[RMDB]
This 207-nucleotide RNA was probed chemically with 2A3 and DMS. The RNA was probed in 150 mM KOAc, 10 mM MgCl2 and 150 mM bicine (pH 8.5) at 24 C. For 2A3 the reverse transcriptase was SuperScript II with manganese.

RNA sequence: GGGAACGACUCGAGUAGAGUCGAAAAAGGGUAAGAAUGAAUCGAGAUUGGAUGAUCCGCAGCCAACCCCUAAGGCUUGCUGCUAUGGGAGAGGUUCACAGACUAAGUGGAAGUGGGUGGUAUGCUCUAGCGUACUGCUUAAGAUAUAGUCGGUCUCCACUACCACAUACUUCGGUAUGUGGUAGUGAAAAGAAACAACAACAACAAC
Reactivity to 2A3 in 0.01 (KOAc 150mM, MgCl2 10mM, bicine 150mM(pH8.5), 24C), signal-to-noise 4, nucleotides 027 to 156: a010g090g010g000u060a060a020g040a070a060u130g040a020a060u070c080g020a040g030a150u070u070g050g010a010u040g030a030u030c040c050g010c020a010g010c010c040a020a040c010c000c000c040u050a070a050g020g000c010u020u070g020c030u040g000c030u060a080u120g010g020g000a040g000a010g050g000u060u070c030a020c000a050g060a010c020u080a140a010g050u020g050g030a030a030g030u060g030g020g010u010g010g010u010a010u040g020c010u030c080u230a040g020c010g020u010a020c000u020g040c000u040u040a060a020g020a060u070a020u020a100g020u010c010g010g010u010c000u010c000
Reactivity to DMS in 0.01 (KOAc 150mM, MgCl2 10mM, bicine 150mM(pH8.5), 24C), signal-to-noise 2, nucleotides 027 to 156: a090g000g000g000u020a040a070g010a090a100u000g000a070a140u000c030g000a160g020a110u000u000g000g000a110u000g020a070u000c090c030g010c000a110g000c000c030a050a070c020c000c040c060u000a090a130g020g020c030u010u000g000c010u000g040c000u010a110u010g010g020g000a120g020a150g010g010u010u000c050a080c030a070g020a040c020u010a040a170g010u000g010g000a080a080g020u000g000g010g020u000g040g040u020a040u000g030c030u020c210u000a160g050c020g020u010a020c020u000g030c010u000u010a020a160g000a150u000a120u000a090g000u000c000g010g020u000c000u010c000

The DMS profile rests on 3,025 reads. Values cover nucleotides 27 to 156.